[RMDB]
Source information
This 207-nucleotide RNA was probed chemically with 2A3 and DMS. Conditions: 150 mM KOAc, 10 mM MgCl2 and 150 mM bicine (pH 8.5), 24 C.
RNA sequence: GGGAACGACUCGAGUAGAGUCGAAAAGAAACCCUGGGAGCAUGCCGAGGGGCGGUUGGCCUCGUAAAAAGCCGCACAGUUAUAGUUGCAAACGACGAUAACUACGCUCUAGCAGCUUAGGCUAGCUAGCCAUCUGACACAGGUCUCUCAAAUGGGCGAAUCUACCAGGGUUCGCCCUGGUAGAUUCAAAAGAAACAACAACAACAAC
Reactivity to 2A3 in 0.01 (KOAc 150mM, MgCl2 10mM, bicine 150mM(pH8.5), 24C), signal-to-noise 2, nucleotides 027 to 156: g070a040a090a030c000c000c040u020g010g000g000a020g040c070a080u100g060c060c050g020a040g000g050g010g000c000g010g050u010u010g020g000c020c010u040c030g030u070a100a140a000a030a010g010c000c040g020c000a050c070a060g010u050u010a040u040a060g020u020u060g080c120a070a150a080c140g040a010c020g010a010u020a020a010c020u050a040c060g020c070u030c000u100a060g000c030a020g000c010u060u040a030g000g010c000u010a010g020c010u030a060g000c050c010a070u070c030u090g060a040c000a000c000a170g050g060u100c010u000c000u010c000a090a130a130u130g010g000g020c060
Reactivity to DMS in 0.01 (KOAc 150mM, MgCl2 10mM, bicine 150mM(pH8.5), 24C), signal-to-noise 1, nucleotides 027 to 156: g000a140a130a080c020c000c010u000g020g020g020a040g080c040a060u000g010c060c000g010a130g010g000g050g040c030g000g040u010u000g010g020c010c000u000c170g000u000a060a160a120a090a080g000c000c010g140c020a190c090a050g000u000u000a040u000a030g010u000u000g020c080a150a170a280c050g030a060c050g020a090u000a000a050c000u000a110c030g010c080u000c080u000a210g020c060a100g030c000u010u000a040g050g000c000u000a030g000c010u000a070g000c040c020a110u000c000u010g010a070c090a040c060a050g020g020u020c000u000c040u010c010a030a070a100u010g000g010g040c080